Description: This 207-nucleotide RNA was probed chemically with 2A3 and DMS. The reactions ran in a buffer of 150 mM KOAc, 10 mM MgCl2 and 150 mM bicine (pH 8.5), at 24 C. Values cover nucleotides 27 to 156. For DMS the reverse transcriptase was MarathonRT.

RNA sequence: GGGAACGACUCGAGUAGAGUCGAAAAGCGGUUCCCUGUACUCGAAAUCCGCUUUAUGCGAGGCUUAAUUCCUUUGUUGAGGCCGUAUUUUUGCGAAGUCUGCCCAAAGCACGUAGUGUUUGAAGAUUUCGGUCCUAUGCAAUAUGAACCCAUGAACGUGUAAGAUCCAGUUCGCUGGAUCUUACACAAAAGAAACAACAACAACAAC
Reactivity to 2A3 in 0.01 (KOAc 150mM, MgCl2 10mM, bicine 150mM(pH8.5), 24C), signal-to-noise 1, nucleotides 027 to 156: g010c000g000g000u000u000c000c000c050u060g100u090a140c090u080c060g050a000a100a030u070c000c000g050c000u070u100u000a060u120g040c050g010a010g080g020c060u110u160a010a040u140u200c050c030u060u100u080g040u050u020g040a040g010g020c010c010g000u000a190u000u130u010u120u130g040c010g020a020a000g130u000c000u010g000c090c040c000a040a020a000g000c010a030c060g130u030a040g070u000g020u040u050u030g080a050a000g000a050u050u020u030c030g010g020u060c020c000u120a090u040g010c000a030a100u050a070u260g050a080a080c000c000c000a090u040g000a050a010c090
Reactivity to DMS in 0.01 (KOAc 150mM, MgCl2 10mM, bicine 150mM(pH8.5), 24C), signal-to-noise 1, nucleotides 027 to 156: g030c060g050g020u020u010c000c030c020u020g030u000a090c060u000c060g010a050a000a070u010c010c000g100c020u000u000u000a130u020g000c070g000a010g020g000c070u000u000a150a160u010u000c010c020u000u000u010g000u000u000g000a100g030g020c030c010g020u010a020u020u000u000u020u020g000c030g020a040a070g030u010c020u000g000c110c080c120a120a040a100g000c020a070c020g020u020a130g040u010g020u010u000u010g000a150a050g010a150u000u000u000c070g020g000u000c020c050u000a120u000g020c100a080a130u010a030u000g030a130a090c040c010c020a130u010g010a110a140c160